[RMDB]
RNA sequence: GGGAACGACUCGAGUAGAGUCGAAAACAAACCAUAUAACGAAAUUUGAAAAGAAUGAGACUGUACAAUGAUUUAUUGUAUUAAAGGCAUCACCCCACGAAUCUGAGGUGGUGCAGAUUCCAGGUGGAUGAGUACUCGAUUUCGAUCGAGUACUCAUAAAAGAAACAACAACAACAAC
Reactivity to 2A3 in 0.01 (KOAc 150mM, MgCl2 10mM, bicine 150mM(pH8.5), 24C), signal-to-noise 3, nucleotides 027 to 126: c000a040a250a030c010c030a030u200a020u080a240a100c130g110a020a030a240u260u170u120g060a180a120a040a030g070a010a040u130g000a080g040a100c060u050g000u000a000c010a030a060u050g300a300u060u170u300a020u070u010g000u000a010u030u220a170a030a020g140g000c000a010u000c000a030c000c000c010c000a030c060g110a050a090u040c070u090g040a060g100g000u000g000g000u080g000c020a000g000a000u080u010c000c000a030g080g080u040g110g060
Reactivity to DMS in 0.01 (KOAc 150mM, MgCl2 10mM, bicine 150mM(pH8.5), 24C), signal-to-noise 3, nucleotides 027 to 126: c120a140a120a130c130c040a080u040a190u020a050a070c070g010a070a060a070u000u000u010g000a070a090a080a090g000a070a000u000g000a170g030a090c170u000g010u000a000c000a020a000u000g000a100u030u020u070a020u000u000g000u000a010u000u010a030a090a050g000g000c020a010u000c030a000c020c000c040c000a020c290g010a120a110u030c210u000g010a030g020g060u000g000g000u010g000c010a000g010a000u000u000c000c160a070g000g010u010g030g000